[RMDB]
The record gives the reactivity of an RNA of 177 nucleotides to 2A3 and DMS. The RNA was probed in 150 mM KOAc, 10 mM MgCl2 and 150 mM bicine (pH 8.5) at 24 C. DMS adducts were read by reverse transcription with MarathonRT. For 2A3 the reverse transcriptase was SuperScript II with manganese. The data come from the RNA Mapping Database (RMDB), library M2PK90.
RNA sequence: GGGAACGACUCGAGUAGAGUCGAAAACAUAUGACGGAGAGUGGAACACUCAGCGGAAACGCAUCCAAUGUCUGAAGUCUUUAAUGGGUAUAACAGUCAGUUGACCCACAUCCCAACAGACAAUAAAUAUAUAUUCGGGAUUCGUCCCGAAUAUAUAAAAAGAAACAACAACAACAAC
Reactivity to 2A3 in 0.01 (KOAc 150mM, MgCl2 10mM, bicine 150mM(pH8.5), 24C), signal-to-noise 3, nucleotides 027 to 126: c040a030u140a070u250g020a030c080g050g030a050g000a010g090u070g030g240a180a010c000a010c070u020c030a010g020c010g000g030a040a040a010c000g000c010a020u020c030c030a050a100u080g000u010c010u020g040a030a010g020u000c000u010u060u050a080a030u050g020g020g010u050a110u040a300a050c010a040g260u190c050a020g000u170u010g010a020c000c030c000a020c000a050u020c000c000c000a000a040c000a000g020a000c000a010a080u200a200a090a000
Reactivity to DMS in 0.01 (KOAc 150mM, MgCl2 10mM, bicine 150mM(pH8.5), 24C), signal-to-noise 4, nucleotides 027 to 126: c050a110u010a060u010g010a080c070g000g000a090g000a010g010u010g010g030a130a140c070a030c030u000c030a200g030c020g010g000a050a070a120c030g010c040a300u000c030c050a120a090u010g010u000c010u000g020a210a110g000u000c030u000u000u010a110a130u000g010g000g000u000a050u030a010a020c020a190g010u010c240a110g000u000u000g000a020c000c000c000a020c070a070u000c000c010c010a090a130c030a030g000a020c010a100a070u010a070a060a060